[RMDB]
RNA sequence: GGGAACGACUCGAGUAGAGUCGAAAACAUUACGAAUUCAGUCGCAAAUUGUAGAAUUAGCUACUCUACGAUUUAGUGAGCGUGAGUAACGUUGUAAUAUAAUAUAGUCUUUGGAAGGAUUAUAUUGGAGCCGCGGACAAGUUCGCUUGUCCGCGAACAUAAUUAAUACCUUCGGGUAUUAAUUAUGAAAAGAAACAACAACAACAAC
Reactivity to 2A3 in 0.01 (KOAc 150mM, MgCl2 10mM, bicine 150mM(pH8.5), 24C), signal-to-noise 4, nucleotides 027 to 156: c030a060u190u280a020c040g040a110a130u090u070c010a030g060u030c020g000c020a020a000a000u000u000g010u000a000g010a020a020u070u030a060g040c040u100a020c020u000c000u000a000c000g010a000u000u010u130a080g000u020g020a070g100c090g050u070g030a020g060u040a070a070c050g000u020u030g030u060a120a130u060a150u010a110a030u000a000u000a010g000u000c020u050u130u140g160g050a110a070g030g010a000u010u010a000u010a010u010u030g050g030a070g070c090c010g000c010g000g000a000c000a000a000g010u050u140c180g070c110u000u000g000u000c000c010g000c000g000a000a000
Reactivity to DMS in 0.01 (KOAc 150mM, MgCl2 10mM, bicine 150mM(pH8.5), 24C), signal-to-noise 2, nucleotides 027 to 156: c020a100u020u000a030c010g000a300a070u000u010c030a090g000u000c000g020c020a060a020a040u000u010g020u000a010g000a040a060u000u000a220g020c220u000a090c060u010c020u000a020c000g010a010u000u000u000a130g020u000g010a120g000c060g030u020g010a140g030u000a080a080c100g020u000u000g010u010a130a120u010a100u000a010a030u000a040u000a010g000u000c060u000u010u000g030g010a270a260g010g000a010u000u010a010u000a010u000u000g020g030a120g010c110c010g050c020g030g060a010c000a010a070g020u000u010c260g010c020u000u000g030u000c010c030g000c010g000a010a040
Conditions: 150 mM KOAc, 10 mM MgCl2 and 150 mM bicine (pH 8.5), 24 C.
The record gives the reactivity of an RNA of 207 nucleotides to 2A3 and DMS.
Source: RMDB library M2RFPK, as collected in RNAgym.
Reactivities are given for positions 27 through 156.